[RMDB]
RNA sequence: GGGAACGACUCGAGUAGAGUCGAAAAAACAGGUACCAGGAGAGACUGGCGGCUGGGGAGGAGGGCGCCUUGGCCAACGGUGUCUUCACUGAGCAGGAGCGGCCGUCUGGAGUGGAGGGAAGCUCGUGGGAUCUCAGAGGCCCUGGACUCCUCCCAGCAGAAGAUACGUUUUCGAACGUAUCUUCUGAAAAGAAACAACAACAACAAC
Reactivity to 2A3 in 0.01 (KOAc 150mM, MgCl2 10mM, bicine 150mM(pH8.5), 24C), signal-to-noise 1, nucleotides 027 to 156: a000a000c110a070g000g040u090a040c000c000a010g050g040a060g030a040g020a110c010u000g010g060c020g020g000c020u060g000g040g000g050a020g000g000a000g000g070g030c090g060c000c000u030u020g000g000c000c000a020a000c090g000g000u070g040u020c000u230u220c050a020c090u140g000a000g000c010a020g020g070a130g020c090g060g020c110c060g080u070c070u070g040g070a100g050u100g010g070a080g040g030g020a040a040g000c000u020c010g030u030g000g010g000a050u040c080u000c060a020g010a020g040g030c020c010c000u000g030g020a030c010u000c000c000u000c000c000c000a000g010